[RMDB]
This 177-nucleotide RNA was probed chemically with DMS.
RNA sequence: GGGAACGACUCGAGUAGAGUCGAAAAGAUAUGGACGUUUGGCAGAGAAGGUGGUCGGAAACGACCACACUUCGACGAAGCCAUGGACGUCCUAAGUCAAAGAGGGCCAUGUUCGCAUGGCCCUCAACGUUCAGAGCAAGUUCGCUUGCUCUGAACGAAAAGAAACAACAACAACAAC
Reactivity to DMS in 0.01 (KOAc 150mM, MgCl2 10mM, bicine 150mM(pH8.5), 24C), signal-to-noise 1, nucleotides 027 to 126: g000a020u000a010u000g000g000a010c020g030u000u000u030g020g050c000a020g090a030g020a020a010g000g020u000g000g020u010c000g000g000a000a000a020c010g010a010c000c000a010c000a000c020u000u000c000g000a190c290g030a190a180g000c000c000a030u030g030g010a000c000g000u010c000c010u000a010a090g000u000c000a110a110a130g000a020g030g000g000c000c000a000u010g000u000u010c270g000c000a010u000g000g000c000c000c000u000c000a000a070
For DMS the reverse transcriptase was MarathonRT. For DMS, 1,608 sequencing reads were counted.